[RMDB]
RNA sequence: GGGAACGACUCGAGUAGAGUCGAAAAAGGGACUUUCGAGUCCCUACGUCCUAAGUCUAGCGGGAGUGGUGUAAAGCGAAGAACGCAUCGGAAACGAUGCGGGAGCUUUGACACCACUUUGAUCGCUAGAUAUGGAAAUCAUCAGGUUCGCCUGAUGCGAUAUAUCUGUCUUCGGACAGAUAUAUCGAAAAGAAACAACAACAACAAC
Reactivity to DMS in 0.01 (KOAc 150mM, MgCl2 10mM, bicine 150mM(pH8.5), 24C), signal-to-noise 3, nucleotides 027 to 156: a020g000g000g030a030c010u000u020u010c220g020a070g030u010c000c000c010u000a010c060g010u000c010c010u000a120a250g010u000c010u010a020g010c010g020g000g030a030g030u000g020g020u000g040u000a040a020a030g010c000g020a130a240g010a120a150c000g020c010a010u000c000g010g000a270a120a300c000g000a020u000g000c000g020g000g000a210g000c010u000u000u000g010a030c010a020c010c010a000c000u000u000u000g000a090u000c010g020c010u000a010g010a010u030a130u000g000g000a080a060a110u010c000a010u000c000a020g010g020u000u000c300g040c030c000u010g000a010u000g020
Reactivity to 2A3 in 0.01 (KOAc 150mM, MgCl2 10mM, bicine 150mM(pH8.5), 24C), signal-to-noise 4, nucleotides 027 to 156: a010g050g000g020a020c050u120u120u150c300g040a060g020u000c010c000c000u010a020c070g050u000c000c000u050a120a010g010u000c000u000a000g010c030g000g020g020a010g010u000g010g000u000g000u010a000a000a000g010c040g140a270a010g000a050a010c000g000c000a000u000c000g030g000a090a060a050c020g000a000u010g000c020g000g000g000a000g000c020u000u000u050g060a000c000a010c000c000a000c000u000u000u000g010a020u010c000g000c010u000a000g000a000u020a030u040g030g040a030a110a080u140c000a000u060c000a000g040g030u060u120c200g120c060c000u000g000a000u010g000
Structure probing data (DMS and 2A3) for a 207-nucleotide construct. For DMS the reverse transcriptase was MarathonRT. Reactivities are given for positions 27 through 156. Conditions: 150 mM KOAc, 10 mM MgCl2 and 150 mM bicine (pH 8.5), 24 C. For 2A3, 5,552 sequencing reads were counted.